[RMDB]
RNA sequence: GGGAACGACUCGAGUAGAGUCGAAAAGAGCCGACGCCAGGUCGCGGCCACGGUCGCAACGAUGCGCGACGAGGCCAGCAUCCCGGUCUUGGCGGCUUGAACGCCGAUGUCGGUGACGACCGCCUCGGGUGGAGCCAGUGUUCGCACUGGCUCCACCAAAAGAAACAACAACAACAAC
Reactivity to 2A3 in 0.01 (KOAc 150mM, MgCl2 10mM, bicine 150mM(pH8.5), 24C), signal-to-noise 2, nucleotides 027 to 126: g100a000g040c000c000g000a000c000g040c000c040a000g060g000u030c130g030c040g020g000c010c010a000c030g200g140u060c000g030c040a000a090c070g220a150u110g140c060g020c000g150a000c060g000a040g000g020c000c000a000g000c050a040u050c010c000c030g040g030u130c090u020u070g020g010c000g030g020c000u090u130g030a160a020c030g000c000c000g050a070u070g030u080c050g000g000u000g050a030c000g010a040c000c000g020c000c040u050c000g020
Source: RMDB library OK1LIB, as collected in RNAgym. Chemical mapping of a 177-nucleotide RNA with 2A3. For 2A3 the reverse transcriptase was SuperScript II with manganese. The RNA was probed in 150 mM KOAc, 10 mM MgCl2 and 150 mM bicine (pH 8.5) at 24 C.